[RMDB]
RNA sequence: GGGAACGACUCGAGUAGAGUCGAAAACAAAACAACUAAAGCUGCUGUGAAGGUUGAAAGAAAAACAGCCCUGCCAAAGUAAUAUUCAUGAUAGGCAGAACCAGCAUUUAGAAAAUCAUGAAUACAACGUGUCACUGACCUUCGGGUCAGUGACACGAAAAGAAACAACAACAACAAC
Reactivity to 2A3 in 0.01 (KOAc 150mM, MgCl2 10mM, bicine 150mM(pH8.5), 24C), signal-to-noise 1, nucleotides 027 to 126: c000a000a090a020a000c010a020a000c000u250a000a000a000g050c040u000g040c080u110g080u140g240a260a120g020g000u080u100g040a000a130a220g150a100a230a130a000a050c000a000g000c050c000c000u000g000c000c000a000a130a000g060u020a050a210u050a050u070u180c000a000u010g000a000u040a020g000g010c000a000g030a000a000c080c000a000g040c070a130u030u060u000a010g060a050a030a020a000u020c000a030u000g020a000a000u060a030c040a070a000

This 177-nucleotide RNA was probed chemically with 2A3. It was measured as part of the RMDB library OK1LIB. The reactions ran in a buffer of 150 mM KOAc, 10 mM MgCl2 and 150 mM bicine (pH 8.5), at 24 C.